This 207-nucleotide RNA was probed chemically with 2A3. It was measured as part of the RMDB library RNAMAK. The 2A3 profile rests on 1,229 reads. For 2A3 the reverse transcriptase was SuperScript II with manganese.
RNA sequence: GGGAACGACUCGAGUAGAGUCGAAAAUGCCGUAUUCUUCGGAAUACGGCAAAAAAGAUAUGGAUUGUUCCACUCAACAGCCGACCAUCGGAAACGAUGGUUCGGACAUGAGUGGACAAUCCUAAGUCAAAAAUCUCAGGUGUUCGCACCUGAGAAAGUGAAUAUUACCCUUCGGGGUAAUAUUCACAAAAGAAACAACAACAACAAC
Reactivity to 2A3 in 0.01 (KOAc 150mM, MgCl2 10mM, bicine 150mM(pH8.5), 24C), signal-to-noise 1, nucleotides 027 to 156: u030g010c000c000g000u000a000u020u000c020u020u060c200g050g000a000a000u000a000c000g050g020c000a000a000a000a000a000a000g020a020u010a020u040g000g000a000u000u000g030u120u030c010c000a000c000u020c000a150a200c030a240g010c010c000g030a020c000c000a000u000c000g000g050a010a000a010c000g000a000u000g000g060u020u020c000g010g000a000c000a160u110g000a010g010u000g010g000a000c000a000a000u000c000c000u000a000a000g000u000c010a000a000a100a300a300u060c000u000c000a000g050g010u010g010u050u110c210g050c080a000c000c000u010g000a000g000a020a010a000